[RMDB]
RNA sequence: GGGAACGACUCGAGUAGAGUCGAAAAGCCACCCGCAACUACGGCGUCCCCGACAACGAAACCGACCUACUGCGGUCGCCCAGGCCAAGGUGGCCACCAAACGCUGCUGGCAUGCAGGUGGAGUGCAGAACGGUAUAAGUUUCGACUUAUACCGUUCAAAAGAAACAACAACAACAAC
Reactivity to 2A3 in 0.01 (KOAc 150mM, MgCl2 10mM, bicine 150mM(pH8.5), 24C), signal-to-noise 5, nucleotides 027 to 126: g010c010c010a010c000c020c010g000c010a030a040c020u070a020c020g010g000c000g050u050c010c000c010c000g060a040c030a140a030c030g120a140a010a020c050c020g050a030c030c020u130a100c090u220g110c050g020g000u000c000g000c020c010c000a040g030g000c010c010a090a050g180g040u060g040g070c000c010a030c020c040a050a110a010c030g000c030u050g000c020u010g060g010c100a120u090g000c010a010g000g020u010g000g030a120g020u130g060c110a050
Reactivity to DMS in 0.01 (KOAc 150mM, MgCl2 10mM, bicine 150mM(pH8.5), 24C), signal-to-noise 7, nucleotides 027 to 126: g010c020c020a040c010c010c030g030c050a080a170c040u010a060c060g010g000c030g010u000c000c010c000c010g030a030c070a030a050c060g020a070a110a090c230c030g010a020c020c010u010a200c140u000g020c150g000g010u000c020g010c050c020c040a160g000g010c020c020a110a210g020g020u000g020g010c010c020a080c120c110a040a070a060c040g010c010u000g000c150u000g000g000c090a070u000g000c020a030g000g010u000g010g000a110g010u010g020c140a130
Chemical mapping of a 177-nucleotide RNA with 2A3 and DMS. DMS adducts were read by reverse transcription with MarathonRT. The RNA was probed in 150 mM KOAc, 10 mM MgCl2 and 150 mM bicine (pH 8.5) at 24 C. The data come from the RNA Mapping Database (RMDB), library OK2TST. The DMS profile rests on 7,927 reads.